[RMDB]
RNA sequence: GGGAACGACUCGAGUAGAGUCGAAAAACAAUUGAUGAGAGGCAGCCAUGCAGCCUGUGUUCCUCUUUGAAGUGAAGGAAGAAGAGCGAAGAAGUUCUUAAUAGUAGCACGCUGGUAUGACGAUCGAAAUGGUGAACAUGUUCGCAUGUUCACCAUUAAAAGAAACAACAACAACAAC
Reactivity to 2A3 in 0.01 (KOAc 150mM, MgCl2 10mM, bicine 150mM(pH8.5), 24C), signal-to-noise 2, nucleotides 027 to 126: a010c060a060a140u070u220g060a080u030g000a040g010a020g090g000c000a000g000c000c000a070u100g010c020a020g050c020c010u040g010u030g000u040u030c000c010u000c040u070u100u080g130a170a070g010u070g130a080a030g090g000a020a040g050a050a000g000a020g020c060g060a040a050g080a120a010g220u030u000c010u050u090a130a100u030a110g040u000a020g010c020a000c100g050c010u010g010g000u060a110u030g070a060c020g030a020u050c020g020a060
Reactivity to DMS in 0.01 (KOAc 150mM, MgCl2 10mM, bicine 150mM(pH8.5), 24C), signal-to-noise 3, nucleotides 027 to 126: a050c060a110a080u010u010g020a080u000g010a090g000a120g010g020c050a040g010c040c050a070u010g020c070a100g020c030c040u020g000u000g010u000u010c020c000u010c060u000u020u000g000a100a080g020u000g010a050a050g020g010a050a080g000a040a050g000a040g030c050g000a080a080g000a110a080g000u000u000c020u000u010a060a080u010a090g000u010a080g010c030a050c070g010c040u000g000g000u000a040u000g000a060c060g010a120u010c080g010a050